This 177-nucleotide RNA was probed chemically with DMS and 2A3. The RNA was probed in 150 mM KOAc, 10 mM MgCl2 and 150 mM bicine (pH 8.5) at 24 C.
RNA sequence: GGGAACGACUCGAGUAGAGUCGAAAAUCAUUCUGUGCAUUUCCCUCGCAAUUUUGUCGUGGUCUACUGUAUCGAAUGCCUUCUCGUAGUCGACAAAUACAGCACCCGUAAGAGAUUGGUGCGUGGGCGCUAGCCUACGAUUCGUCGUAGGCUAGCGAAAAGAAACAACAACAACAAC
Reactivity to DMS in 0.01 (KOAc 150mM, MgCl2 10mM, bicine 150mM(pH8.5), 24C), signal-to-noise 3, nucleotides 027 to 126: u040c090a040u000u020c010u010g000u030g020c080a060u010u010u020c030c020c000u010c080g000c070a100a060u020u010u010u000g040u040c010g030u000g010g010u020c080u020a140c070u020g010u000a010u000c150g000a030a040u000g030c050c060u010u000c030u000c070g020u000a070g000u020c060g020a110c140a050a070a040u020a040c080a100g020c090a050c000c000c060g020u030a120a100g010a050g010a120u010u020g000g000u000g000c010g040u010g020g000g000
Reactivity to 2A3 in 0.01 (KOAc 150mM, MgCl2 10mM, bicine 150mM(pH8.5), 24C), signal-to-noise 6, nucleotides 027 to 126: u120c020a010u110u070c050u110g080u060g040c020a020u020u040u060c030c000c000u010c040g050c020a090a130u060u040u080u180g110u060c030g000u040g060g020u020c020u090a080c040u060g030u070a060u040c050g050a060a030u110g050c030c020u040u050c030u010c030g050u080a020g020u030c020g030a060c020a030a090a010u110a040c020a020g000c000a010c000c010c010g070u100a120a060g030a030g030a260u070u150g030g000u010g030c020g000u100g020g040g010

2A3 adducts were read by reverse transcription with SuperScript II with manganese. It was measured as part of the RMDB library OK1LIB.